RNA sequence: GGGAACGACUCGAGUAGAGUCGAAAACUGGAGAAGGGAGACUCGGGAACGCCUAGCAUCUGAGGGACAAAGCCGCCCCCGGGCGCUCCCCUCGGAGGUCCACUGGGUGGGUUCACAUCCCCAACCCUACACCCGUAGUUCGCUACGGGUAAAAGAAACAACAACAACAAC
Reactivity to DMS in 0.01 (KOAc 150mM, MgCl2 10mM, bicine 150mM(pH8.5), 24C), signal-to-noise 9, nucleotides 027 to 129: c060u030g000g000a060g010a070a040g010g020g000a060g000a060c030u010c090g000g030g000a050a050c090g030c060c030u010a060g010c080a080u010c030u010g020a030g010g000g000a060c080a090a100a070g020c050c060g010c040c000c020c110c180g000g000g000c010g000c010u010c040c010c010c000u000c020g000g000a010g010g010u040c070c110a110c080u030g020g020g020u010g030g000g040u030u040c070a090c160a160u010c020c000c010c020a040a120c020c010c000u000a100c150
Reactivity to 2A3 in 0.01 (KOAc 150mM, MgCl2 10mM, bicine 150mM(pH8.5), 24C), signal-to-noise 9, nucleotides 027 to 129: c030u040g040g020a040g010a060a060g010g020g010a050g020a020c020u020c070g010g010g000a040a010c040g010c010c020u030a030g030c030a110u030c020u050g010a030g010g010g000a020c050a040a100a010g040c090c040g020c010c040c010c010c030g030g000g000c030g020c010u030c000c000c000c000u000c000g000g010a010g010g050u070c050c020a040c080u030g000g000g020u040g020g070g010u070u090c060a030c010a140u090c010c000c000c000a020a110c010c000c010u040a040c030